[RMDB]
RNA sequence: GGGAACGACUCGAGUAGAGUCGAAAAGAUAUGGAUUGUCAUCGAUCGUACGCGACAGUCGGAAACGAUAGUGUCCAUACGGGAGACAAUCCUAAGUCAAACCUCAUUGAGUUCGCUCAAUGAGGAACUUGACAAGAUUCUUCGGAAUCUUGUCAAGAAAAGAAACAACAACAACAAC
Reactivity to DMS in 0.01 (KOAc 150mM, MgCl2 10mM, bicine 150mM(pH8.5), 24C), signal-to-noise 3, nucleotides 027 to 126: g020a060u010a300u000g000g010a010u000u000g000u010c000a190u000c170g010a100u010c000g020u000a010c040g010c150g020a000c000a080g010u000c000g000g000a140a100a170c010g000a000u020a100g050u000g030u000c000c030a080u020a000c020g000g000g000a040g010a020c000a000a030u000c010c000u000a030a050g000u000c020a090a090a200c010c000u000c000a000u000u000g000a010g010u010u010c240g020c000u000c000a010a000u000g000a010g010g010a010a010
Reactivity to 2A3 in 0.01 (KOAc 150mM, MgCl2 10mM, bicine 150mM(pH8.5), 24C), signal-to-noise 4, nucleotides 027 to 126: g030a000u080a050u160g000g020a010u000u030g020u050c090a220u190c300g110a100u060c030g030u020a010c070g070c180g050a010c010a020g020u040c000g030g020a070a040a020c000g000a010u060a100g300u120g000u000c010c000a040u040a100c000g000g000g000a050g000a020c020a010a010u000c000c000u020a090a020g030u020c040a040a040a250c000c010u000c000a000u000u010g000a020g020u060u180c300g030c090u010c000a000a000u010g000a010g000g000a000a030